[RMDB]
RNA sequence: GGGAACGACUCGAGUAGAGUCGAAAAUAUUGCUAUUGGCGGCAGCCGCGAACGUCGGGGGGUGAUCAGCACCGCCAAUUAUCCCGCGCGUAAAUUUGGCGUACGUAGCGCUAUGCCGACAGGGAUGUGCUCACAUAACGUUCGCGUUAUGUGAGCAAAAAGAAACAACAACAACAAC
Reactivity to DMS in 0.01 (KOAc 150mM, MgCl2 10mM, bicine 150mM(pH8.5), 24C), signal-to-noise 2, nucleotides 027 to 126: u030a050u000u010g030c060u000a040u010u020g000g040c020g010g010c060a060g050c000c010g020c020g040a100a040c050g030u030c190g000g000g010g020g020g010u000g000a140u010c120a130g040c040a160c040c020g010c010c010a010a020u010u000a080u000c000c000c000g040c110g000c110g000u040a030a060a140u010u000u010g000g030c010g020u000a030c260g030u000a090g000c000g000c030u080a040u010g000c000c000g000a080c100a080g010g000g000a080u010g040
This 177-nucleotide RNA was probed chemically with DMS. Conditions: 150 mM KOAc, 10 mM MgCl2 and 150 mM bicine (pH 8.5), 24 C. High DMS reactivity at an A or C suggests that its Watson-Crick edge is free. For DMS the reverse transcriptase was MarathonRT.